This 177-nucleotide RNA was probed chemically with 2A3 and DMS.
Source: RMDB library OK1LIB, as collected in RNAgym.
RNA sequence: GGGAACGACUCGAGUAGAGUCGAAAAAUCGCCGUAUGCGCAGACACGAAAAAUGAUCAUUGGCUGUUACCCACCUCCAACAGGGUAAGUCCGGACGAGGUUCAAUGGACACUUACGUUACGUCGGCCGGAGUACUCAAAUUCGUUUGAGUACUCCGAAAAGAAACAACAACAACAAC
Reactivity to 2A3 in 0.01 (KOAc 150mM, MgCl2 10mM, bicine 150mM(pH8.5), 24C), signal-to-noise 7, nucleotides 027 to 126: a000u080c040g010c020c010g050u060a050u100g050c050g000c020a020g030a060c020a020c110g160a080a070a030a020a030u130g010a060u060c050a060u050u080g040g000c010u030g070u060u060a060c000c000c010a030c020c020u050c020c010a080a090c050a140g040g010g000u060a080a010g060u040c030c010g030g010a010c030g040a030g050g000u030u050c030a040a050u100g050g020a010c010a010c090u070u070a020c050g070u040u050a010c050g030u030c000g030g000c010
Reactivity to DMS in 0.01 (KOAc 150mM, MgCl2 10mM, bicine 150mM(pH8.5), 24C), signal-to-noise 6, nucleotides 027 to 126: a060u020c050g010c020c010g030u010a030u020g010c070g020c040a050g000a090c080a060c080g030a030a100a110a110a070u040g020a070u000c040a050u000u010g000g000c060u000g000u010u010a080c020c010c030a130c080c020u010c070c080a070a150c210a100g010g000g020u000a040a060g030u010c040c010g010g000a180c120g010a060g000g000u010u000c050a050a100u000g000g020a070c060a050c040u010u000a060c050g000u000u020a090c110g020u000c010g020g000c080

About this RNA:
The RNA was probed in 150 mM KOAc, 10 mM MgCl2 and 150 mM bicine (pH 8.5) at 24 C. For DMS the reverse transcriptase was MarathonRT. For 2A3 the reverse transcriptase was SuperScript II with manganese.